[RMDB]
RNA sequence: GGGAACGACUCGAGUAGAGUCGAAAACUCAAGCCAAGUGAGGGCGUUUUUCCAGCUUGCUGGCACCCCUGAUUAUUCAGGAAGGUGAUCCCCAUUAGUUCAACUUUUAGCCACCCCGCCGCGCUGCCACACUUUGACCGUUCGCGGUCAAAGUGUGAAAAGAAACAACAACAACAAC
Reactivity to DMS in 0.01 (KOAc 150mM, MgCl2 10mM, bicine 150mM(pH8.5), 24C), signal-to-noise 1, nucleotides 027 to 126: c040u000c090a140a110g000c020c020a060a070g030u010g000a100g000g030g020c080g000u010u000u010u030u010c000c010a110g020c020u040u000g000c030u000g000g010c020a040c010c070c000c000u010g000a030u010u060a120u000u030c070a000g020g060a140a060g010g000u000g000a080u060c000c000c000c060a110u030u000a090g010u010u040c150a080a050c050u000u000u000u000a120g000c040c020a110c000c030c000c030g000c050c040g000c010g040c010u000g000c130
Reactivity to 2A3 in 0.01 (KOAc 150mM, MgCl2 10mM, bicine 150mM(pH8.5), 24C), signal-to-noise 3, nucleotides 027 to 126: c020u030c030a050a000g040c030c030a140a030g070u050g060a100g040g030g020c030g020u020u020u020u080u090c000c000a000g000c050u020u090g020c010u010g030g000c000a000c000c010c000c000u010g020a070u030u270a090u300u090c020a010g070g000a110a140g010g050u020g070a100u060c000c000c000c000a060u050u150a020g060u050u160c050a060a060c020u080u110u070u140a020g010c000c000a010c000c000c000c020g010c000c010g000c010g040c030u030g060c020